[RMDB]
RNA sequence: GGGAACGACUCGAGUAGAGUCGAAAAUGGCUUUGCGAAGUCGAUAUGGACAGGACAUAGUUAAAUUGCAAAUAACUAUGCAAGUAUUACUAUUUCCCAGAACGUUAUGUAACGUACGGAAGAUAGAAGAUUACUGGCAAUUCGUUGCCAGUAAUCUAAAAGAAACAACAACAACAAC
Reactivity to 2A3 in 0.01 (KOAc 150mM, MgCl2 10mM, bicine 150mM(pH8.5), 24C), signal-to-noise 4, nucleotides 027 to 126: u100g020g020c020u050u020u080g040c100g050a100a000g010u020c020g010a010u060a070u240g070g010a050c040a070g060g070a050c000a000u010a010g000u000u000a020a100a160u140u120g060c040a000a040a130u040a010a000c030u000a010u000g000c000a000a120g030u070a080u080u130a020c000u020a030u010u000u000c000c000c000a010g090a010a010c040g010u030u030a120u300g150u160a050a010c030g010u050a030c110g030g090a050a000g060a090u080a070g100a080
Reactivity to DMS in 0.01 (KOAc 150mM, MgCl2 10mM, bicine 150mM(pH8.5), 24C), signal-to-noise 4, nucleotides 027 to 126: u030g000g010c020u000u020u020g030c070g040a120a050g020u000c010g000a130u020a060u010g010g000a150c070a130g000g020a180c000a020u000a000g020u000u000a000a100a110u010u070g010c280a090a100a100u000a020a020c030u000a000u000g010c040a100a060g010u000a030u000u020a100c020u000a030u010u000u010c000c000c000a120g020a080a040c020g020u000u020a120u040g020u030a020a020c000g020u000a090c110g000g000a050a040g000a090u030a020g010a180
Overview:
The record gives the reactivity of an RNA of 177 nucleotides to 2A3 and DMS. The RNA was probed in 150 mM KOAc, 10 mM MgCl2 and 150 mM bicine (pH 8.5) at 24 C. Reactivities are given for positions 27 through 126.